[RMDB]
RNA sequence: GGGAACGACUCGAGUAGAGUCGAAAAGAUAUGGAUCGCCGACGGGAGGCACUCGGAAACGAGGUGCCAUCGAUCGUCGCGAUCCUAAGUCAAAAGCACUCAAUAAACUUCGGUUUAUUGAGUGCAAGACACUCUAUCGCUUCGGCGAUAGAGUGUCAAAAGAAACAACAACAACAAC
Reactivity to 2A3 in 0.01 (KOAc 150mM, MgCl2 10mM, bicine 150mM(pH8.5), 24C), signal-to-noise 1, nucleotides 027 to 126: g010a000u080a060u100g000g010a030u000c020g070c200c200g070a010c000g120g010g000a040g000g000c000a000c000u010c010g040g010a020a050a030c080g030a030g040g170u040g050c020c000a180u280c040g050a140u060c010g000u030c020g000c010g000a000u030c000c020u020a000a010g020u000c020a000a000a080a120g030c000a010c000u000c000a030a000u010a020a070a020c010u070u060c250g100g020u010u000u000a000u020u010g000a000g000u000g000c010a010a010
Reactivity to DMS in 0.01 (KOAc 150mM, MgCl2 10mM, bicine 150mM(pH8.5), 24C), signal-to-noise 1, nucleotides 027 to 126: g000a040u000a300u000g040g000a000u000c000g000c190c000g000a000c000g000g010g000a010g000g040c010a050c000u000c010g000g000a110a110a150c010g040a040g010g010u000g040c000c000a170u020c100g000a070u030c040g030u000c000g000c010g000a000u000c010c010u000a000a100g000u010c050a050a040a180a120g010c010a020c000u000c010a000a010u010a000a010a010c000u000u000c290g010g010u000u000u000a000u000u000g010a000g040u000g010c000a000a020